Chemical mapping of a 177-nucleotide RNA with 2A3 and DMS. It was measured as part of the RMDB library OK2TRN. The DMS profile rests on 1,015 reads.
RNA sequence: GGGAACGACUCGAGUAGAGUCGAAAAUUGGAGAUCCAAACUGUACAGAAGGAACUAUUCACCCAGGAAAUCCAUAAGAUGAAUAGUUCAUCCACUAAUCUUUUCUGUUCAAGAGAUGUGAUGGACAACUGCUCCAUAGUUUCGACUAUGGAGCAGUAAAAGAAACAACAACAACAAC
Reactivity to 2A3 in 0.01 (KOAc 150mM, MgCl2 10mM, bicine 150mM(pH8.5), 24C), signal-to-noise 2, nucleotides 027 to 126: u130u070g020g000a020g020a020u000c010c020a000a080a080c100u110g070u110a110c000a060g040a110a020g100g000a010a010c010u020a030u010u050c000a020c020c010c050a020g000g060a100a210a050u080c100c040a130u110a140a120g120a180u090g000a010a000u020a050g010u000u000c010a040u030c020c010a050c030u040a140a040u000c040u070u070u070u000c080u150g220u160u140c080a050a010g000a000g020a050u070g050u060g100a140u060g000g020a000c030a030
Reactivity to DMS in 0.01 (KOAc 150mM, MgCl2 10mM, bicine 150mM(pH8.5), 24C), signal-to-noise 2, nucleotides 027 to 126: u010u030g030g020a160g020a100u020c000c050a040a060a080c110u000g010u000a080c180a080g040a100a110g000g030a020a030c000u000a020u000u000c010a030c030c030c120a190g000g020a140a090a110u000c010c010a060u000a040a100g000a040u010g000a000a020u000a020g030u000u020c000a120u020c050c080a080c100u000a160a070u000c010u000u010u000u040c090u000g030u000u000c150a130a060g030a070g000a080u000g000u000g020a050u010g000g000a100c220a110